[RMDB]
RNA sequence: GGGAACGACUCGAGUAGAGUCGAAAAGAUAUGGACCCAGGUAUCGGACUUGGAUUUAGGAUCGGAAACGAUCCUUGUCAGUCCGUACUGGGUCCUAAGUCAAAACUGAUUGCUUCGGCAAUCAGAACAGCUAUUUUUACUUCGGUAAAAAUAGCUGAAAAGAAACAACAACAACAAC
Reactivity to 2A3 in 0.01 (KOAc 150mM, MgCl2 10mM, bicine 150mM(pH8.5), 24C), signal-to-noise 3, nucleotides 027 to 126: g030a010u070a050u200g000g000a010c000c010c020a010g160g070u200a140u300c030g020g010a010c040u110u300g220g010a080u300u300u260a020g000g000a000u010c010g040g020a050a040a030c000g000a000u000c000c000u000u000g000u000c000a000g000u010c000c000g000u000a010c000u010g010g020g000u000c000c000u010a010a010g000u000c010a000a000a080a090c010u010g010a000u000u000g010c010u050u060c230g140g000c010a000a010u000c000a000g000a060a020
Reactivity to DMS in 0.01 (KOAc 150mM, MgCl2 10mM, bicine 150mM(pH8.5), 24C), signal-to-noise 3, nucleotides 027 to 126: g000a050u000a300u000g000g000a040c000c010c000a010g010g000u020a060u000c030g000g000a020c000u000u010g020g000a020u000u020u000a000g020g030a010u000c000g010g000a170a160a270c010g010a020u000c010c010u000u000g000u000c010a020g010u000c010c000g020u000a010c000u000g000g010g010u000c000c000u000a000a060g000u000c040a090a090a140a240c010u000g000a010u010u000g000c000u000u010c230g040g000c000a020a000u000c000a010g010a130a150

An RNA of 177 nucleotides, treated with 2A3 and DMS and read out base by base. DMS adducts were read by reverse transcription with MarathonRT. For 2A3 the reverse transcriptase was SuperScript II with manganese.